[RMDB]
RNA sequence: GGGAACGACUCGAGUAGAGUCGAAAAAGAUCUCUACAAUGAGAAUUAUGAAACACACUGAAAGAGAUCAGAGGUGAUACAAACAAAUGGACAAAUAUUCCAUGCUCGUGGAUAGGAAGAAUCAAUAUUAUUAAAACAGCCAUAGUGCCCAAAGAGAAUUUACUAAUGAGUUCGCUCAUUAGUAAAUAAAAGAAACAACAACAACAAC
Reactivity to 2A3 in 0.01 (KOAc 150mM, MgCl2 10mM, bicine 150mM(pH8.5), 24C), signal-to-noise 3, nucleotides 027 to 156: a010g020a020u010c000u000c000u020a080c050a160a250u130g020a050g060a100a070u190u120a120u220g060a040a070a040c030a000c000a000c050u030g030a090a090a020g030a010g000a010u030c010a010g030a050g040g010u040g010a050u050a130c070a030a120a000c020a000a130a030u060g010g000a030c040a030a170a030u130a090u110u060c030c010a020u060g060c030u050c110g040u050g020g010a030u020a110g010g010a060a060g020a040a030u050c040a020a030u070a040u300u080a040u040u080a120a130a050a060c030a030g040c020c000a030u030a090g030u030g060c050c030c040a010a060a030g110a020g010a070
Reactivity to DMS in 0.01 (KOAc 150mM, MgCl2 10mM, bicine 150mM(pH8.5), 24C), signal-to-noise 2, nucleotides 027 to 156: a160g010a020u000c000u000c060u000a280c080a150a070u000g000a080g060a140a300u010u000a090u040g010a210a030a130c020a130c030a030c070u000g020a070a110a120g050a080g020a070u000c020a070g030a080g000g040u000g010a090u000a120c060a060a050a130c050a060a050a060u000g040g020a300c080a040a050a070u000a130u010u000c000c000a070u000g000c030u020c070g050u000g000g000a080u000a040g000g020a060a130g010a090a070u000c020a060a120u020a110u000u000a090u020u020a060a020a050a110c030a020g010c000c020a050u000a070g000u000g010c030c010c000a040a070a070g020a160g010a130